Chemical mapping of a 177-nucleotide RNA with 2A3 and DMS.
[RMDB]
RNA sequence: GGGAACGACUCGAGUAGAGUCGAAAAGAUAUGGACCAUCCAACAGCUAAGGGAUCGGAAACGAUCCUUAGACAUGGAUUGUCCUAAGUCAAAGCAUCAAGUUUUCCUUCGGGAAAACUUGAUGCAACAACAUGUAAGACUUCGGUCUUACAUGUUGAAAAGAAACAACAACAACAAC
Reactivity to 2A3 in 0.01 (KOAc 150mM, MgCl2 10mM, bicine 150mM(pH8.5), 24C), signal-to-noise 2, nucleotides 027 to 126: g030a010u070a050u100g000g010a010c010c010a000u000c010c000a050a070c070a220g040c010u020a030a060g280g120g110a090u010c010g040g000a070a040a000c010g000a000u000c000c000u000u000a010g020a040c020a060u070g010g000a000u000u010g000u000c000c000u020a100a010g040u030c070a150a050a070g010c000a010u000c000a000a010g010u000u000u000u010c020c000u050u130c300g040g000g000a000a000a000a000c000u000u000g000a000u000g010c000a000a000
Reactivity to DMS in 0.01 (KOAc 150mM, MgCl2 10mM, bicine 150mM(pH8.5), 24C), signal-to-noise 6, nucleotides 027 to 126: g010a030u000a280u010g000g000a020c000c060a020u000c010c010a020a080c300a160g000c010u000a010a030g010g020g010a010u000c000g020g010a060a060a130c000g000a010u000c000c000u000u000a010g010a080c080a220u000g000g000a010u000u000g010u000c000c000u000a020a070g000u000c030a110a100a160g000c000a000u000c000a010a010g000u000u000u000u000c000c000u000u010c220g040g010g000a000a000a000a000c000u000u000g000a010u000g010c000a020a070
The 2A3 profile rests on 17,378 reads. 2A3 adducts were read by reverse transcription with SuperScript II with manganese.